[RMDB]
The record gives the reactivity of an RNA of 207 nucleotides to DMS and 2A3. Reactivities are given for positions 27 through 156. It was measured as part of the RMDB library OK3TST. 2A3 is a SHAPE reagent: it acylates the 2'-hydroxyl of flexible nucleotides of all four kinds.

RNA sequence: GGGAACGACUCGAGUAGAGUCGAAAAUAUAAUGAUGGAUACCUGCCAUUAUACAUUUAUCCAAAUCCACAGAAUGUACAACACCAAGAGUGAGCCUAAUGUGGACUACGCAUGUUGGAUGAUUAUGAUGUGUCAUUGUGGAUGCACUGAUCGUAACCUAAGUCACCUUAUUCGUAAGGUGACUUAGAAAAGAAACAACAACAACAAC
Reactivity to DMS in 0.01 (KOAc 150mM, MgCl2 10mM, bicine 150mM(pH8.5), 24C), signal-to-noise 2, nucleotides 027 to 156: u000a070u010a030a070u000g030a080u000g010g030a250u010a050c150c070u000g020c000c030a040u000u000a050u000a010c030a060u000u000u000a050u000c030c030a070a130a080u010c000c010a020c020a140g030a160a070u000g010u000a040c040a050a100c080a070c060c050a080a110g020a170g020u000g000a160g020c000c050u000a050a180u010g020u000g000g010a050c030u000a080c070g020c050a090u010g020u000u000g000g020a100u010g010a090u000u000a040u020g020a100u000g040u000g010u010c020a220u000u010g070u000g000g010a060u000g010c020a000c050u000g010a090u010c020g000u000a070a110c140
Reactivity to 2A3 in 0.01 (KOAc 150mM, MgCl2 10mM, bicine 150mM(pH8.5), 24C), signal-to-noise 4, nucleotides 027 to 156: u170a010u050a050a100u030g020a000u060g050g030a040u110a210c020c050u100g060c040c020a000u060u010a040u050a070c080a050u080u110u180a100u050c030c010a060a080a000u000c010c000a030c000a020g110a160a030u120g030u130a070c040a100a010c020a090c030c030a190a030g170a010g080u040g000a000g070c020c030u040a090a070u040g010u000g030g000a030c020u090a050c090g060c110a050u100g050u030u020g040g020a080u060g020a020u030u050a090u200g120a110u020g030u020g030u040c030a040u040u170g100u120g120g010a010u020g020c010a010c020u040g010a030u040c010g020u040a000a020c000